RNA sequence: GGGAACGACUCGAGUAGAGUCGAAAAAAAAGGCAGGUUGCUUACCUGGGUUCCCUGGCAGCGCUGCAACGGAAUCCAGUGCCCACCGGAGCGCCAGUUCGUGCGAGAGUAGCUUCGGCUUCUUCUUCGUGGAACGGCUCCGCGUGUACGCCUGGUGCCCUCUUAUCUUGUUCGCAAGAUAAGAGGGAAAAGAAACAACAACAACAAC
Reactivity to 2A3 in 0.01 (KOAc 150mM, MgCl2 10mM, bicine 150mM(pH8.5), 24C), signal-to-noise 2, nucleotides 027 to 156: a000a000a000a000g110g000c030a020g000g050u180u090g040c030u140u090a160c020c040u070g080g020g000u010u010c000c010c000u010g070g000c040a030g030c170g050c190u070g010c040a100a070c100g040g050a030a040u020c000c000a000g020u050g150c000c020c000a000c000c000g000g010a010g000c050g090c080c040a040g000u010u020c070g110u150g030c030g010a000g000a000g020u030a000g000c000u020u030c240g090g000c010u000u000c070u130u030c000u080u100c010g020u030g040g000a010a000c000g000g010c010u000c000c000g010c080g000u020g020u020a010c040g000c000c010u030g010g050u050g030
Reactivity to DMS in 0.01 (KOAc 150mM, MgCl2 10mM, bicine 150mM(pH8.5), 24C), signal-to-noise 2, nucleotides 027 to 156: a040a040a050a070g010g040c020a140g010g030u010u000g010c020u000u020a090c130c060u000g010g020g000u000u000c000c010c030u000g020g030c030a090g030c290g040c100u000g050c030a090a250c150g010g020a090a040u000c020c000a010g000u000g000c020c080c020a110c030c010g000g000a020g010c000g040c170c030a100g000u000u010c010g030u000g030c020g010a120g020a070g020u000a030g020c000u000u010c300g070g000c000u000u000c020u010u010c040u000u000c020g020u000g020g030a030a030c010g000g000c030u000c020c010g000c130g000u000g020u000a100c050g010c000c010u010g000g000u010g010